[RMDB]
RNA sequence: GGGAACGACUCGAGUAGAGUCGAAAAGAUAUGGAAUGUAACGCUUUUGACGCUUAUCAUGUCGGAAACGACAUGAAAGCGAUAAGCGUUGACAUUCCUAAGUCAAAGUCUCUGUUCGCAGAGACAACAUAGCCUGAGGGUUCGCCCUCAGGCUAUGAAAAGAAACAACAACAACAAC
Reactivity to DMS in 0.01 (KOAc 150mM, MgCl2 10mM, bicine 150mM(pH8.5), 24C), signal-to-noise 2, nucleotides 027 to 126: g000a040u030a300u010g020g010a040a000u000g000u000a070a000c000g010c010u010u020u000u010g010a250c150g020c000u000u010a140u010c000a010u000g000u000c000g020g030a110a090a300c000g010a010c000a010u000g010a000a000a000g000c000g010a140u000a010a020g010c000g010u000u010g010a040c000a000u000u020c000c000u000a020a100g000u000c030a120a150a120g000u000c000u000c000u010g000u020u010c220g000c020a000g000a000g000a010c060a040a110
Reactivity to 2A3 in 0.01 (KOAc 150mM, MgCl2 10mM, bicine 150mM(pH8.5), 24C), signal-to-noise 1, nucleotides 027 to 126: g040a020u070a070u190g040g020a010a000u010g030u010a000a010c010g000c020u060u260u100u220g280a120c080g000c010u040u070a250u300c010a000u000g000u000c000g010g020a080a090a120c000g010a010c000a000u000g010a030a000a000g000c010g000a000u030a010a000g000c000g000u000u000g000a000c010a000u000u000c000c000u020a140a020g060u000c090a160a090a030g020u010c010u000c000u000g110u060u110c300g000c110a020g020a000g000a000c000a000a010
An RNA of 177 nucleotides, treated with DMS and 2A3 and read out base by base. The data come from the RNA Mapping Database (RMDB), library TTRDES. The 2A3 profile rests on 2,673 reads. The reactions ran in a buffer of 150 mM KOAc, 10 mM MgCl2 and 150 mM bicine (pH 8.5), at 24 C.